[RMDB]
RNA sequence: GGGAACGACUCGAGUAGAGUCGAAAAUCGUGCAGCUUCGGAAAUUGGUGAUCUUUCGAUGAACAAUGCAUUCCAUAUCAAAUCAGCCUGCUGCAUCUUGUUCAUUGCAUAAAACUCCUCUGGUGAACUGGAGUUCAGUAUUCGUACUGAACUCCAGAAAAGAAACAACAACAACAAC
Reactivity to DMS in 0.01 (KOAc 150mM, MgCl2 10mM, bicine 150mM(pH8.5), 24C), signal-to-noise 2, nucleotides 027 to 126: u000c080g000u000g000c020a030g030c080u030u000c100g020g010a050a070a130u000u010g010g050u000g000a110u010c110u000u000u000c100g000a030u000g010a050a040c050a040a040u010g000c060a120u000u000c000c000a060u000a070u010c040a020a110a110u020c120a020g010c050c030u000g020c110u000g010c020a000u000c080u000u000g010u000u000c020a070u000u000g020c270a100u020a050a050a080a100c100u010c030c010u000c080u000g010g000u010g000a070a140
Reactivity to 2A3 in 0.01 (KOAc 150mM, MgCl2 10mM, bicine 150mM(pH8.5), 24C), signal-to-noise 2, nucleotides 027 to 126: u070c000g010u030g040c030a000g030c030u070u120c020g050g040a040a090a080u080u070g040g010u050g080a050u000c080u030u150u040c050g020a020u010g000a040a020c030a080a050u090g010c010a040u100u000c020c040a020u080a020u060c060a070a070a160u020c010a030g000c000c000u050g000c030u010g020c000a020u010c030u080u040g010u010u030c040a030u010u060g050c070a030u140a130a120a060a130c010u040c050c030u050c060u070g030g080u110g060a120a070